[RMDB]
Overview
Conditions: 150 mM KOAc, 10 mM MgCl2 and 150 mM bicine (pH 8.5), 24 C. Structure probing data (DMS and 2A3) for a 207-nucleotide construct. For 2A3 the reverse transcriptase was SuperScript II with manganese. The DMS profile rests on 3,358 reads. Reactivities are given for positions 27 through 156.
RNA sequence: GGGAACGACUCGAGUAGAGUCGAAAACAAUACACAGCCGGAGAACGUUAUGAUAGACCACCUUAUCAAACAGUGUUCCAAAAGACGCUCAAUGUACUCGGUUUAACAGAAACAGUAACAUACUACUAUCCAUAUGCAUCACUUAAUGAAGCAUGCGGAUUCUACACACUUUCGAGUGUGUAGAAUCAAAAGAAACAACAACAACAAC
Reactivity to DMS in 0.01 (KOAc 150mM, MgCl2 10mM, bicine 150mM(pH8.5), 24C), signal-to-noise 2, nucleotides 027 to 156: c030a080a160u010a130c080a100c080a090g030c040c030g000g020a160g000a080a010c060g050u000u010a030u020g010a110u000a070g000a050c040c050a030c020c040u000u000a160u000c050a100a080a100c090a130g020u000g020u000u000c030c000a080a080a080a250g010a020c010g000c010u000c030a050a200u000g010u000a050c050u010c080g010g010u000u000u000a050a140c100a150g000a080a040a050c030a030g000u010a040a060c070a110u000a080c040u000a080c030u010a080u000c010c050a050u000a030u000g000c000a070u000c040a050c110u000u000a120a150u000g000a050a060g040c030a010u000g010c010g050
Reactivity to 2A3 in 0.01 (KOAc 150mM, MgCl2 10mM, bicine 150mM(pH8.5), 24C), signal-to-noise 8, nucleotides 027 to 156: c010a010a030u160a080c060a010c030a060g020c030c020g090g000a060g020a070a030c040g020u080u050a130u160g030a040u030a030g060a060c020c040a060c020c070u080u070a060u080c010a040a050a030c030a060g010u020g060u130u020c020c000a060a050a010a040g050a020c020g020c030u070c090a030a090u100g010u070a060c030u010c070g010g030u040u090u100a090a030c040a040g110a070a070a010c050a010g040u060a080a020c030a110u130a040c030u030a010c020u060a080u060c040c020a070u060a020u220g020c010a020u030c020a030c070u070u160a080a040u290g040a060a010g020c030a010u030g010c020g040